Conditions: 150 mM KOAc, 10 mM MgCl2 and 150 mM bicine (pH 8.5), 24 C. Structure probing data (2A3 and DMS) for a 177-nucleotide construct. It was measured as part of the RMDB library TTRDEL. The 2A3 profile rests on 10,294 reads. Reactivities are given for positions 27 through 126.
[RMDB]
RNA sequence: GGGAACGACUCGAGUAGAGUCGAAAAGAUAUGGAGUAUGGAGCUCGGGUGAGCGUUGAAAUCGGAAACGAUGGAGCUCACAGAGCGAUGAAAUACUCCUAAGUCAAAAGGUCGCUUCGGCGACCAACUCAUAAGAAACGUUCGCGUUUCUUAUGAGAAAAGAAACAACAACAACAAC
Reactivity to 2A3 in 0.01 (KOAc 150mM, MgCl2 10mM, bicine 150mM(pH8.5), 24C), signal-to-noise 4, nucleotides 027 to 126: g040a010u090a050u150g010g000a000g020u010a020u030g000g030a030g000c010u020c030g300g300g010u010g000a000g000c030g030u210u050g010a040a030a000u010c000g020g020a070a030a050c000g000a010u020g000g030a020g000c000u010c000a000c000a000g010a000g000c000g000a020u030g010a000a020a010u010a000c000u000c000c000u010a130a020g030u020c010a000a030a060a240g000g000u000c010g010c000u070u130c280g150g000c000g000a000c000c000a000a000
Reactivity to DMS in 0.01 (KOAc 150mM, MgCl2 10mM, bicine 150mM(pH8.5), 24C), signal-to-noise 5, nucleotides 027 to 126: g000a050u000a300u000g000g010a010g020u000a000u000g020g000a100g010c000u000c010g010g020g020u000g010a010g030c000g000u010u010g000a080a130a020u000c000g000g010a160a130a140c010g010a010u000g000g000a140g010c000u000c000a010c000a190g000a000g010c000g000a050u020g000a070a070a020u000a010c000u000c000c010u010a010a090g000u000c030a090a070a100a100g010g010u000c000g010c000u000u000c210g040g000c000g010a020c010c000a010a040